The record gives the reactivity of an RNA of 207 nucleotides to 2A3. 2A3 adducts were read by reverse transcription with SuperScript II with manganese. Source: RMDB library OK3TST, as collected in RNAgym. Conditions: 150 mM KOAc, 10 mM MgCl2 and 150 mM bicine (pH 8.5), 24 C.
RNA sequence: GGGAACGACUCGAGUAGAGUCGAAAAUCAUAUCGUUCUUCUAAUCUCCAUAUAUGAAAAAGUGAGGAAAUACGAGAUGCAAUUGGUAACUAAGAAGGAAAAAAAAUGAGGAAAACCAGGAGGAUGGCUUUGGGGCAGGAAUAUGAAGUCAUCUCUACAAUUCCCGAUAGUUCGCUAUCGGGAAUUGAAAAGAAACAACAACAACAAC
Reactivity to 2A3 in 0.01 (KOAc 150mM, MgCl2 10mM, bicine 150mM(pH8.5), 24C), signal-to-noise 2, nucleotides 027 to 156: u120c030a020u040a020u110c010g000u010u030c010u040u060c010u070a080a040u050c020u000c020c020a090u140a010u040a090u210g100a130a060a110a010a030g080u080g040a040g030g060a010a040a040u090a040c020g000a010g010a070u040g040c010a000a100u090u130g040g020u070a070a090c070u020a000a130g070a060a090g130g100a050a030a000a000a000a030a000a010u090g000a000g000g000a000a020a020a070c010c090a010g010g010a000g000g030a010u130g000g000c000u010u000u000g010g040g000g010c000a010g000g030a010a080u080a110u300g010a010a000g070u090c060a020u080c070u070c000u110a030